[RMDB]
Structure probing data (DMS and 2A3) for a 177-nucleotide construct. Conditions: 150 mM KOAc, 10 mM MgCl2 and 150 mM bicine (pH 8.5), 24 C. Source: RMDB library VIROID, as collected in RNAgym.
RNA sequence: GGGAACGACUCGAGUAGAGUCGAAAAGACCGUCCCCUCGGUAAUGGCAAAUGGGACCCAAAACUCUCUUUAUCUUCCAAAAGAAAAGCAAGAAAAAACUGGCUCUCCCUUACCCAUCCGAGUGGACCGUAUAUCAGUGGUUCGCCACUGAUAUACGAAAAGAAACAACAACAACAAC
Reactivity to DMS in 0.01 (KOAc 150mM, MgCl2 10mM, bicine 150mM(pH8.5), 24C), signal-to-noise 2, nucleotides 027 to 126: g010a300c030c020g020u010c010c030c030c010u010c000g010g010u000a020a040u000g010g020c040a010a080a100u010g000g010g010a040c150c000c000a010a030a060a190c150u000c020u000c000u000u000u000a130u010c000u010u000c190c300a080a040a070a090g000a010a000a020a010g000c150a050a050g010a020a010a020a060a070a120c290u000g010g030c000u000c070u000c010c000c000u000u000a210c300c000c000a000u010c000c000g020a000g030u000g010g010a000c040
Reactivity to 2A3 in 0.01 (KOAc 150mM, MgCl2 10mM, bicine 150mM(pH8.5), 24C), signal-to-noise 2, nucleotides 027 to 126: g060a010c020c000g010u000c010c010c000c000u000c010g000g030u110a130a000u020g020g000c030a040a070a300u040g000g010g000a040c050c000c000a010a080a050a080c040u020c000u030c000u050u050u080a300u150c010u070u000c100c060a190a190a080a000g030a000a010a010a000g040c080a070a080g070a050a120a020a010a000a030c070u010g000g000c010u030c000u000c010c010c030u000u030a060c010c000c000a010u030c010c010g000a010g010u000g020g000a000c000